[RMDB]
Chemical mapping of a 207-nucleotide RNA with 2A3. The data come from the RNA Mapping Database (RMDB), library RNAMAK. The 2A3 profile rests on 2,300 reads.
RNA sequence: GGGAACGACUCGAGUAGAGUCGAAAAGGGGUCGCUUUGAGUUCGCUCUGGAGCAUCGAUCGUGACUGAAGCCUCCACGGUCACGGGAGCUCCAACGUGAGCGAACAAUGAUGAGCGACGGAGGCACCCAAAAUCGGUCAGGUUCGCCUGACCGAAAGGUAAGAGGUUACUUCGGUAACCUCUUACCAAAAGAAACAACAACAACAAC
Reactivity to 2A3 in 0.01 (KOAc 150mM, MgCl2 10mM, bicine 150mM(pH8.5), 24C), signal-to-noise 2, nucleotides 027 to 156: g030g010g080g010u010c000g000c020u020u030u050g010a010g000u000u000c000g020c000u000c000u020g000g000a000g010c000a030u300c020g020a000u010c000g010u010g010a000c000u010g020a070a030g000c020c010u000c000c000a020c000g000g000u000c000a000c000g000g000g000a000g000c010u000c000c000a000a010c060g130u060g010a000g000c030g000a000a000c000a010a270u040g010a010u040g000a000g000c020g000a000c010g000g000a000g000g000c000a030c010c000c010a110a020a070a040u080c010g000g000u000c000a000g000g050u010u070c140g110c120c000u010g010a010c010c000g020a010a010a010